[RMDB]
RNA sequence: GGGAACGACUCGAGUAGAGUCGAAAAAGCACGGCUGCUACGGCAUCCGUGCAUGCGCGGAUAAAUCGACGGAUUGAAAAGCGGCGAUAUUGCUAACCGCCUGACGCGCAUUCUCAAUUAGCGACAAAAAAGGGCCUUUGGUUCGCCAAAGGCCCAAGACAAUUUAUUUCUUCGGAAAUAAAUUGUCAAAAGAAACAACAACAACAAC
Reactivity to 2A3 in 0.01 (KOAc 150mM, MgCl2 10mM, bicine 150mM(pH8.5), 24C), signal-to-noise 2, nucleotides 027 to 156: a010g000c010a000c010g000g000c020u000g000c000u030a040c170g060g010c010a000u020c000c000g060u000g010c000a000u010g010c000g000c000g000g020a010u020a000a010a010u000c040g080a130c160g230g030a010u000u000g010a000a000a000a000g010c000g040g000c030g020a070u070a130u230u110g000c000u010a020a010c010c000g010c000c000u000g000a000c000g030c000g000c000a010u030u010c030u010c010a020a070u020u030a000g010c010g060a100c120a010a110a030a060a030a050g000g000g000c010c000u000u000u020g090g040u090u100c200g050c070c010a010a000a000g000g000c010c010c000a000a000